RNA sequence: GGGAACGACUCGAGUAGAGUCGAAAAAAAGACUGGCUUGCCAUCUUCAAACCCUGCUAUGAUGGAGCCACACUCUCUGCCUCUGUAAUGUGAGCACAUGUGUGCCGGGCACAUCUCUUUGCCAGGAGAGAUAGGGGAGGUUCGCCUCCCCUAUCUCAAAAGAAACAACAACAACAAC
Reactivity to DMS in 0.01 (KOAc 150mM, MgCl2 10mM, bicine 150mM(pH8.5), 24C), signal-to-noise 1, nucleotides 027 to 126: a070a060a040g020a140c120u010g030g060c000u040u000g020c010c030a060u000c000u000u000c110a130a080a060c090c000c000u010g000c090u000a090u020g000a030u010g000g000a100g020c020c040a020c100a070c040u000c020u000c090u000g000c060c030u000c000u000g000u000a070a020u020g000u010g010a170g000c080a000c090a030u020g010u000g020u010g050c030c080g010g000g010c000a070c070a050u000c040u000c110u000u010u000g040c000c050a060g000g040a230
Reactivity to 2A3 in 0.01 (KOAc 150mM, MgCl2 10mM, bicine 150mM(pH8.5), 24C), signal-to-noise 1, nucleotides 027 to 126: a000a000a000g050a020c080u000g000g000c010u060u100g050c000c000a020u020c000u100u040c060a110a060a250c010c000c010u030g000c020u030a050u200g020a000u050g040g010a040g070c040c000a000c000a000c020u030c000u070c030u040g020c000c000u090c020u070g080u160a130a140u230g050u050g070a040g100c020a040c010a090u120g090u020g010u010g120c060c000g000g000g020c040a000c000a040u000c040u000c000u060u110u070g000c040c030a020g000g070a030